[RMDB]
RNA sequence: GGGAACGACUCGAGUAGAGUCGAAAAGGCCAUCGCCCGUGGGGCCUCCGGGUCCGACUCGGGGGCCAUCAAGAGCGGAGACAACAAUCUGGAGGCGCUAUGUGCCAAUUACGUGCUUCCGCUGUACACCAUAGGCAACGUUCGCGUUGCCUAUGGUAAAAGAAACAACAACAACAAC
Reactivity to 2A3 in 0.01 (KOAc 150mM, MgCl2 10mM, bicine 150mM(pH8.5), 24C), signal-to-noise 3, nucleotides 027 to 126: g040g000c010c010a030u070c030g040c020c030c030g030u070g030g050g000g000c000c000u000c000c020g020g000g000u120c110c170g090a160c030u000c000g000g020g030g000g000c000c000a030u030c010a010a060g010a010g000c040g050g010a020g020a030c030a160a030c030a110a150u060c090u140g060g000a020g130g010c000g020c060u150a080u160g140u180g070c000c000a010a010u220u130a060c110g000u040g000c000u070u080c000c000g000c030u050g030u040a050c050
Reactivity to DMS in 0.01 (KOAc 150mM, MgCl2 10mM, bicine 150mM(pH8.5), 24C), signal-to-noise 1, nucleotides 027 to 126: g020g020c030c070a000u040c000g000c000c000c010g000u000g000g030g010g000c000c000u000c050c000g000g000g010u000c170c190g040a090c020u010c000g040g000g000g000g000c000c000a000u030c050a170a130g010a020g030c010g000g010a050g000a020c000a070a090c120a080a070u020c160u010g020g010a170g020g000c000g030c000u040a060u000g010u010g010c100c070a210a190u040u000a000c200g030u010g030c080u070u000c010c000g000c020u010g010u040a100c210
An RNA of 177 nucleotides, treated with 2A3 and DMS and read out base by base. The 2A3 profile rests on 1,948 reads. 2A3 adducts were read by reverse transcription with SuperScript II with manganese. The reactions ran in a buffer of 150 mM KOAc, 10 mM MgCl2 and 150 mM bicine (pH 8.5), at 24 C. The DMS profile rests on 1,806 reads.